[RMDB]
RNA sequence: GGGAACGACUCGAGUAGAGUCGAAAAGAGAAUGUUAAGGCCGUGUUCCUUGACGUCGCGAGGGAGGAGAAGGAGCACGUUGGAGAGUUCUUGGCCCUCCUCCUAAAGCUGGAUCCAGAGCUCGGGGUCAGUGACUACUCUUCGGAGUAGUCACUGAAAAAGAAACAACAACAACAAC
Reactivity to 2A3 in 0.01 (KOAc 150mM, MgCl2 10mM, bicine 150mM(pH8.5), 24C), signal-to-noise 4, nucleotides 027 to 126: g110a000g050a070a070u160g000u080u050a080a070g080g030c020c090g080u100g020u060u060c020c000u020u000g040a020c040g030u110c030g020c020g040a090g000g020g000a030g020g020a040g020a040a130g040g010a050g030c040a020c120g020u050u040g030g050a060g000a020g070u040u030c010u070u090g050g000c030c000c000u000c000c000u000c000c000u090a140a060a010g040c020u070g030g020a070u010c030c020a050g000a010g070c010u000c030g010g010g000g020
Reactivity to DMS in 0.01 (KOAc 150mM, MgCl2 10mM, bicine 150mM(pH8.5), 24C), signal-to-noise 3, nucleotides 027 to 126: g030a100g010a050a050u010g020u000u000a020a060g000g000c080c080g050u000g020u050u000c010c000u000u020g030a070c050g000u020c060g010c140g000a300g000g000g000a050g010g000a060g000a070a010g010g010a040g000c000a040c080g040u000u050g000g000a160g000a100g020u000u000c010u000u010g000g000c180c060c010u000c010c010u030c000c000u010a050a070a190g000c010u010g000g000a070u000c060c040a110g010a080g000c060u000c040g000g000g000g000